[RMDB]
RNA sequence: GGGAACGACUCGAGUAGAGUCGAAAAGGCGCUGCAGACGCUGGCAGAGGUGAAGAGCGCCGUGGCCGCCUCCGAGGCUGCCAGGUCAAGGACCCUUAACGAGCUGCAGGACGCUAUCCAGCGAGAGCGUUGGAAUCUUCUUCGGAAGAUUCCAACGAAAAGAAACAACAACAACAAC
Reactivity to 2A3 in 0.01 (KOAc 150mM, MgCl2 10mM, bicine 150mM(pH8.5), 24C), signal-to-noise 1, nucleotides 027 to 126: g020g000c000g000c030u010g060c000a000g010a030c020g010c110u070g000g030c040a020g040a110g100g060u130g080a200a080g020a030g080c180g000c020c010g000u070g040g010c030c020g000c000c030u030c070c170g050a130g040g010c000u000g010c040c030a000g050g010u020c000a020a040g110g030a050c000c010c000u030u040a060a040c070g040a080g020c000u020g010c010a020g020g050a000c000g000c000u030a050u020c010c020a060g050c060g100a140g000a000g110
Reactivity to DMS in 0.01 (KOAc 150mM, MgCl2 10mM, bicine 150mM(pH8.5), 24C), signal-to-noise 2, nucleotides 027 to 126: g000g020c010g000c010u000g000c080a060g000a060c050g010c050u000g020g020c140a120g000a100g000g000u030g000a150a100g000a140g030c180g030c010c060g010u000g000g020c020c060g010c020c010u000c160c130g020a200g010g010c020u000g000c010c020a080g000g000u010c090a100a120g030g010a140c190c000c050u010u010a070a210c070g000a090g010c020u000g000c010a030g010g000a160c000g010c000u000a030u010c030c020a090g010c060g010a090g000a090g020